[RMDB]
RNA sequence: GGGAACGACUCGAGUAGAGUCGAAAACAUGGGGAACUACAUGUGUGUCGCGAGUUCGAUUCUCGCCAGGGCCUGGUCCUGUAGCUCAGUUGGUAGAGCAAGCUGUUCCCCGGACACUUGUCGUCAUAAAAGUUGCCCCCGUUCGCGGGGGCAACAACCCAUUUAUCAGGUUCGCCUGAUAAAUGGGAAAAGAAACAACAACAACAAC
Reactivity to DMS in 0.01 (KOAc 150mM, MgCl2 10mM, bicine 150mM(pH8.5), 24C), signal-to-noise 2, nucleotides 027 to 156: c060a080u000g010g000g100g010a040a000c000u000a100c030a080u010g030u000g000u000g020u000c020g000c000g010a060g000u010u000c060g030a300u000u000c000u000c000g000c040c020a050g000g040g000c040c120u000g060g000u000c010c030u000g000u010a070g000c010u010c020a130g020u000u000g020g000u010a070g000a030g040c040a170a090g000c040u000g000u020u000c000c000c000c000g000g000a050c060a100c150u000u000g030u000c000g000u000c010a090u000a070a100a070a160g000u000u000g020c010c000c000c000c010g040u000u000c300g030c090g020g010g000g050g030c000a000a000c010a010a120
Reactivity to 2A3 in 0.01 (KOAc 150mM, MgCl2 10mM, bicine 150mM(pH8.5), 24C), signal-to-noise 2, nucleotides 027 to 156: c030a100u140g000g000g000g000a000a000c030u110a030c120a110u130g040u060g010u020g040u140c000g000c000g000a000g000u020u000c000g000a000u010u010c000u000c000g000c000c000a000g000g000g010c040c210u230g070g070u030c000c000u020g000u000a010g010c010u000c000a050g020u200u100g060g160u150a010g000a000g000c030a060a010g040c030u010g000u000u000c000c030c000c010g000g000a020c020a020c020u080u160g000u110c030g000u030c030a050u090a100a100a060a030g000u010u020g000c000c000c000c010c020g010u020u020c090g000c020g050g000g010g000g000c020a000a000c010a000a010